[RMDB]
RNA sequence: GGGAACGACUCGAGUAGAGUCGAAAACAUACCCCACUUGUUUUAUAAAUGCCGAUCAAGUGGAUUUUAAAGGAGGGUAUUAUUUUGUUUAUUAUAAAGACCCAGUAACAGGCUUCCGCUCACAUCGCUAAAUAUAUCGUUUCGACGAUAUAUUUAGAAAAGAAACAACAACAACAAC
Reactivity to 2A3 in 0.01 (KOAc 150mM, MgCl2 10mM, bicine 150mM(pH8.5), 24C), signal-to-noise 1, nucleotides 027 to 126: c050a080u200a180c000c030c000c000a000c040u040u030g050u060u130u060u000a040u000a010a270a000u090g020c020c020g040a020u020c020a020a050g000u050g050g050a020u150u120u110u300a110a100a090g110g040a040g060g020g000u050a020u150u000a010u000u240u040u050g030u060u300u100a170u080u120a090u140a050a080a000g060a000c010c000c000a060g140u060a000a060c060a030g000g000c040u040u020c020c020g170c020u110c030a050c000a050u120c020g000
Reactivity to DMS in 0.01 (KOAc 150mM, MgCl2 10mM, bicine 150mM(pH8.5), 24C), signal-to-noise 2, nucleotides 027 to 126: c090a120u010a150c130c060c010c030a080c030u000u010g010u010u000u000u010a100u000a080a080a050u010g000c110c080g010a060u010c080a060a060g000u000g000g010a130u000u000u020u020a070a070a130g010g020a170g000g010g000u000a020u000u000a050u000u000u000u000g000u020u000u010a110u000u010a080u000a060a050a210g000a110c030c040c000a120g000u010a070a070c090a080g030g000c040u000u000c070c040g010c070u000c040a070c120a060u010c130g020
The record gives the reactivity of an RNA of 177 nucleotides to 2A3 and DMS. The reactions ran in a buffer of 150 mM KOAc, 10 mM MgCl2 and 150 mM bicine (pH 8.5), at 24 C. The 2A3 profile rests on 569 reads. Values cover nucleotides 27 to 126. For 2A3 the reverse transcriptase was SuperScript II with manganese. DMS (dimethyl sulfate) methylates the pairing face of unpaired adenines and cytosines.